RNA sequence: GGGAACGACUCGAGUAGAGUCGAAAAUAGGCUGGGCGCGGUGGCUCACACCUGUAAUCCCAGCACUUUUGGAGGUCGAGGGCAGAUCACUUGAGGUCCGGAGUUCAAGACCAGCCUGACCAACAUGCGGUACACGUCAGUUCGCUGACGUGUACCGAAAAGAAACAACAACAACAAC
Reactivity to 2A3 in 0.01 (KOAc 150mM, MgCl2 10mM, bicine 150mM(pH8.5), 24C), signal-to-noise 1, nucleotides 027 to 126: u160a060g000g080c000u030g030g070g020c030g000c040g110g060u020g000g070c090u030c170a110c000a010c020c020u070g030u030a070a060u040c000c000c000a000g030c000a100c030u040u100u020u060g100g020a050g000g010u020c080g110a090g020g010g010c020a020g000a100u110c080a100c150u090u100g060a060g040g050u030c000c060g040g080a130g000u080u080c040a030a000g030a080c050c000a000g000c020c010u000g030a010c010c020a020a040c040a060u260g010
Reactivity to DMS in 0.01 (KOAc 150mM, MgCl2 10mM, bicine 150mM(pH8.5), 24C), signal-to-noise 2, nucleotides 027 to 126: u010a110g030g030c050u000g010g050g040c300g010c110g040g000u000g010g000c150u020c160a120c010a010c030c020u080g030u000a150a200u010c010c000c000a020g000c040a020c050u000u010u020u010g010g000a150g010g000u000c010g000a230g000g000g000c010a110g000a020u020c060a080c110u000u000g010a050g020g000u000c020c060g000g000a190g010u000u000c060a050a130g000a090c040c010a000g020c030c010u000g000a220c120c030a060a120c170a070u010g020